[RMDB]
An RNA of 177 nucleotides, treated with DMS and 2A3 and read out base by base. Source: RMDB library TTRDEL, as collected in RNAgym. For DMS, 1,817 sequencing reads were counted. Conditions: 150 mM KOAc, 10 mM MgCl2 and 150 mM bicine (pH 8.5), 24 C.

RNA sequence: GGGAACGACUCGAGUAGAGUCGAAAAGAUAUGGACGUAUGGUGAGCGACGAAGUCGGAAACGACAGAGCUCCCAUGACGUCCUAAGUCAAAAGCCAGUAUUAUGGCUUCGGCCAUAAUACUGGCAAGUUCACCUUCAUGUUCGCAUGAAGGUGAACAAAAGAAACAACAACAACAAC
Reactivity to DMS in 0.01 (KOAc 150mM, MgCl2 10mM, bicine 150mM(pH8.5), 24C), signal-to-noise 2, nucleotides 027 to 126: g000a060u000a300u000g010g000a010c000g040u000a030u000g010g040u010g020a010g000c010g040a180c300g000a080a140g000u000c010g000g000a130a130a180c000g010a000c000a050g000a190g000c000u000c020c000c000a000u010g000a000c000g000u000c020c000u000a000a080g000u000c050a090a070a190a170g000c000c000a000g000u000a010u010u000a010u000g000g000c020u000u000c160g020g000c000c010a000u010a000a000u000a000c010u000g000g000c000a010a030
Reactivity to 2A3 in 0.01 (KOAc 150mM, MgCl2 10mM, bicine 150mM(pH8.5), 24C), signal-to-noise 1, nucleotides 027 to 126: g040a020u090a050u180g010g000a030c010g030u000a010u010g030g080u300g110a020g000c030g300a300c070g070a280a050g000u000c000g000g050a060a090a020c020g000a000c000a000g030a000g000c000u000c010c000c010a010u030g050a010c010g020u000c000c000u000a020a020g030u010c050a080a000a120a010g000c000c000a000g010u030a000u010u000a010u010g000g000c000u020u040c250g130g030c010c000a000u000a000a000u000a010c010u000g000g010c010a000a000